[RMDB]
RNA sequence: GGGAACGACUCGAGUAGAGUCGAAAAGGCUUGUCGUGAGACAAGCCAAGCGAACGGUGACGUUCGCAAGCGUUGUACGUGAGUACAACGCAGCUAAUCGUGAGAUUAGCACUUAAGCGUGAGCUUAAGAGAUAUUCACUUCGGUGAAUAUCACCUGUAACGUUCGCGUUACAGGAGAUGCAGCGUGAGCUGCAUCAACGGUCGCACGUGAGUGCGACCGAAGCAACCGGUGACGGUUGCAUGGUGGUGCACACCAAAGUGCAUAUAACACUGUGUUCGCACAGUGUAAAAGAAACAACAACAACAAC
Reactivity to DMS in 0.01 (KOAc 150mM, MgCl2 10mM, bicine 150mM(pH8.5), 24C), signal-to-noise 3, nucleotides 027 to 266: g000g010c000u010u000g000u000c010g000u010g000a280g010a010c000a010a000g000c000c010a040a050g020c000g010a010a000c000g000g000u010g000a120c000g020u000u010c000g010c010a090a050g000c000g010u000u000g010u000a010c000g020u030g010a230g010u000a000c000a010a000c000g000c000a030g020c000u000a010a000u010c010g000u010g000a230g000a020u000u000a000g000c020a180c020u000u000a000a000g010c010g010u010g000a150g020c010u010u010a010a010g000a300g010a010u010a000u000u000c010a000c000u010u020c190g020g010u000g000a010a000u000a000u000c000a230c020c010u010g010u020a000a000c000g000u010u020c220g030c000g030u000u000a000c000a010g000g010a090g010a000u010g000c000a010g000c000g010u030g000a120g010c000u000g000c000a000u000c000a090a300c060g020g040u000c060g120c040a000c020g000u010g010a300g080u020g040c020g110a010c010c020g010a060a120g010c000a020a000c030c000g020g000u010g010a060c000g010g000u000u000g010c000a030u010g010g000u000g010g020u000g000c000a020c060a050c020c030a050a080a040g000u000g000c010a030u000a100u000a120
Reactivity to 2A3 in 0.01 (KOAc 150mM, MgCl2 10mM, bicine 150mM(pH8.5), 24C), signal-to-noise 7, nucleotides 027 to 266: g000g000c000u010u010g000u010c020g030u070g110a100g000a030c000a000a000g020c000c000a010a010g000c000g000a000a000c000g000g070u100g080a040c020g000u000u000c000g000c000a010a010g000c000g000u000u010g000u000a020c020g070u080g170a070g010u000a000c000a000a000c000g000c010a000g000c000u000a000a000u000c010g040u050g090a100g000a020u000u000a000g000c010a030c060u010u010a000a000g000c020g070u100g110a030g010c000u010u000a000a000g060a000g000a020u000a000u000u000c000a000c010u040u090c300g130g000u000g000a000a000u000a000u000c020a050c010c000u000g000u000a010a000c010g020u030u080c280g020c000g120u000u010a000c000a000g000g010a070g000a000u000g000c000a000g000c000g030u080g040a010g000c000u000g000c000a000u000c000a000a020c020g000g010u010c010g150c030a030c070g170u180g300a130g020u000g050c000g000a000c000c000g000a030a020g000c010a000a000c000c000g020g060u060g030a030c010g000g000u000u000g000c000a000u040g000g020u070g070g000u020g000c020a010c000a010c000c000a040a050a000g010u020g000c040a010u100a030u100a120